[RMDB]
RNA sequence: GGGAACGACUCGAGUAGAGUCGAAAACGAGAGCGAUUCGUCGCUCUCGAAAGAGUGCACGGCAGCACAAGAAAACCCGAAGAAAAGCAGAGCCGACUGCAAAAACUCCCAUGUUCGCAUGGGAGAACUGUCUUAUGUUCUUCGGAACAUAAGACAGAAAAGAAACAACAACAACAAC
Reactivity to 2A3 in 0.01 (KOAc 150mM, MgCl2 10mM, bicine 150mM(pH8.5), 24C), signal-to-noise 2, nucleotides 027 to 126: c000g010a000g020a010g020c010g030a000u030u040c180g020u010c010g120c000u000c000u010c000g010a000a000a000g070a000g030u020g000c040a010c160g040g040c020a050g000c010a020c030a020a020g120a030a090a030a060c050c010c040g010a110a070g100a120a220a040a010g020c010a000g040a010g060c000c010g070a230c020u000g000c020a030a090a020a070a140c000u020c000c000c000a000u010g010u030u070c200g010c140a000u010g000g000g000a000g000a000a010
Reactivity to DMS in 0.01 (KOAc 150mM, MgCl2 10mM, bicine 150mM(pH8.5), 24C), signal-to-noise 1, nucleotides 027 to 126: c000g010a020g000a050g020c010g020a040u000u020c210g030u000c000g020c000u000c000u010c000g010a010a040a170g000a210g020u010g040c000a110c030g000g020c010a300g020c010a030c000a070a090g010a080a110a060a100c010c010c020g010a140a110g000a070a090a150a090g000c000a020g010a120g020c020c010g010a230c040u000g000c020a030a070a080a130a130c020u000c000c040c010a000u000g000u000u010c240g010c010a000u020g000g000g000a000g000a020a050